[RMDB]
RNA sequence: GGGAACGACUCGAGUAGAGUCGAAAAGAUGCGGCAGCAUCAAGAUUCACAAACUUUAAGGCUUGAGUUGGGGUGGUACACGGUCACCUCCUUUACUCGAAAGGUUCCUUAAUUUCUGAUGGGAAUCCUUAACCCUUCUUUUCGAAGAAGGGUUAAGAAAAGAAACAACAACAACAAC
Reactivity to DMS in 0.01 (KOAc 150mM, MgCl2 10mM, bicine 150mM(pH8.5), 24C), signal-to-noise 6, nucleotides 027 to 126: g000a010u000g000c020g020g010c280a120g020c010a000u000c020a100a090g000a080u000u020c040a110c060a050a060a070c040u010u040u040a090a100g000g010c060u000u000g000a030g020u000u000g020g000g010g010u020g000g010u000a080c120a100c160g010g000u000c050a010c010c010u010c000c010u000u000u000a010c010u000c020g010a020a070a070g010g010u010u020c010c000u000u030a090a090u010u000u020c050u010g010a110u010g000g020g000a060a040u010c070
Reactivity to 2A3 in 0.01 (KOAc 150mM, MgCl2 10mM, bicine 150mM(pH8.5), 24C), signal-to-noise 9, nucleotides 027 to 126: g010a000u020g010c020g090g060c140a070g000c000a080u010c020a010a020g030a040u040u040c030a000c040a090a090a030c050u060u110u190a100a040g080g000c020u030u060g020a010g010u040u030g020g000g000g020u020g010g010u070a070c130a040c110g110g040u050c010a000c000c000u030c000c000u020u040u030a010c000u000c020g050a090a060a010g080g000u050u090c000c000u020u020a060a070u030u090u060c060u060g110a120u070g040g010g040a050a050u030c000